Structure probing data (2A3 and DMS) for a 177-nucleotide construct. The DMS profile rests on 2,063 reads. Conditions: 150 mM KOAc, 10 mM MgCl2 and 150 mM bicine (pH 8.5), 24 C.
RNA sequence: GGGAACGACUCGAGUAGAGUCGAAAAGUGUGUAGGGUCUGAAAUUUUGCACACAUUUACAAUAAUUGUAAAUGUGUUGAAAAUCGUUUGCACGACUGUGAAACGUAGAUCUGUUCGCAGAUCUACGCUGGUACCUUCAGUUCGCUGAAGGUACCAGAAAAGAAACAACAACAACAAC
Reactivity to 2A3 in 0.01 (KOAc 150mM, MgCl2 10mM, bicine 150mM(pH8.5), 24C), signal-to-noise 2, nucleotides 027 to 126: g030u000g000u000g000u020a020g030g090g060u010c060u110g110a050a120a150u050u050u050u270g030c010a000c010a000c000a020u000u000u020a000c000a010a030u300a300a250u210u070g010u010a000a000a000u000g000u000g010u010u080g010a010a000a000a020u040c030g020u010u050u070g030c030a020c010g220a010c100u060g060u050g250a110a070a010c020g000u010a000g000a010u000c010u000g000u010u060c210g070c060a000g010a000u000c000u000a010c000g000
Reactivity to DMS in 0.01 (KOAc 150mM, MgCl2 10mM, bicine 150mM(pH8.5), 24C), signal-to-noise 2, nucleotides 027 to 126: g000u010g020u000g020u000a010g000g000g000u020c040u020g000a060a090a190u020u000u000u010g010c070a020c010a010c000a000u000u000u000a010c000a020a240u000a100a090u010u000g010u010a010a000a000u000g000u000g000u010u010g000a030a030a010a100u000c070g010u000u010u010g010c020a030c030g010a080c050u000g010u000g010a060a100a150c010g010u000a000g010a000u000c000u000g000u010u000c250g020c010a000g000a000u000c000u000a000c000g020